Structure probing data (DMS and 2A3) for a 177-nucleotide construct. DMS (dimethyl sulfate) methylates the pairing face of unpaired adenines and cytosines. DMS adducts were read by reverse transcription with MarathonRT. Source: RMDB library RFM100, as collected in RNAgym. For 2A3 the reverse transcriptase was SuperScript II with manganese.

RNA sequence: GGGAACGACUCGAGUAGAGUCGAAAAUUCGCAGGCUUUGGAUUAUUCAUCUGGAAAGACGCGCACAAGCGGAAAAAACCGUAGGUCUUUCCGGCUACAACGAGCACGCAAGGCAUUUUGGGCGACUACAGGGUAGCAAAUUCGUUUGCUACCCUGUAAAAGAAACAACAACAACAAC
Reactivity to DMS in 0.01 (KOAc 150mM, MgCl2 10mM, bicine 150mM(pH8.5), 24C), signal-to-noise 2, nucleotides 027 to 126: u100u000c000g060c040a150g010g010c000u030u040u000g010g010a110u030u050a110u030u000c070a150u010c040u000g010g000a020a010a010g020a000c040g000c230g000c240a200c220a050a210g000c000g020g050a000a160a090a170a120a130c010c030g090u000a090g010g000u000c000u000u000u000c000c000g010g000c070u010a050c290a020a090c120g000a040g000c120a090c130g000c090a120a020g000g010c030a170u010u000u020u010g000g000g030c040g010a080c210u000
Reactivity to 2A3 in 0.01 (KOAc 150mM, MgCl2 10mM, bicine 150mM(pH8.5), 24C), signal-to-noise 3, nucleotides 027 to 126: u030u010c010g000c040a040g070g020c020u030u080u150g020g000a030u050u060a080u140u220c030a070u000c020u000g000g010a010a010a010g050a010c030g040c000g060c300a020c070a300a080g010c020g010g000a110a110a000a000a040a100c010c020g040u050a070g010g100u020c020u000u000u000c010c010g000g000c010u060a030c030a110a020c040g020a010g020c020a010c050g040c060a010a000g080g000c040a030u000u040u110u160g070g040g000c000g020a010c020u000